[RMDB]
RNA sequence: GGGAACGACUCGAGUAGAGUCGAAAAGAUAUGGAAGAGAUUGAUAAGCGCGAUCGGAAACGAUCGAACUACGCUUGUUUGAUCUCUUCCUAAGUCAAACGGUCUCCUUCUUCGGAAGGAGACCGAAGAGCUAUAUCUAGUUCGCUAGAUAUAGCUCAAAAGAAACAACAACAACAAC
Reactivity to 2A3 in 0.01 (KOAc 150mM, MgCl2 10mM, bicine 150mM(pH8.5), 24C), signal-to-noise 2, nucleotides 027 to 126: g000a020u070a030u130g000g000a000a010g010a010g000a010u010u030g020a010u020a090a000g000c020g000c010g030a010u010c010g020g050a090a060a040c020g000a000u010c010g000a040a030c070u130a030c040g020c010u040u040g070u080u110u120g020a000u000c000u000c000u010u000c000c000u000a000a010g020u000c020a030a040a120c000g000g000u010c000u000c010c010u000u010c020u050u070c250g110g000a000a000g000g000a000g000a000c000c000g000a000a000
Reactivity to DMS in 0.01 (KOAc 150mM, MgCl2 10mM, bicine 150mM(pH8.5), 24C), signal-to-noise 3, nucleotides 027 to 126: g000a030u000a300u000g000g000a000a020g000a010g010a020u000u000g000a000u000a010a000g020c000g000c010g020a030u000c000g000g010a170a090a200c010g000a010u000c000g000a030a040c110u010a300c020g010c010u000u000g020u010u000u000g020a000u000c000u000c000u000u000c000c000u000a010a070g020u000c030a070a100a250c010g000g000u000c000u000c000c000u000u000c010u000u010c190g020g000a010a000g010g010a000g000a000c000c000g020a000a020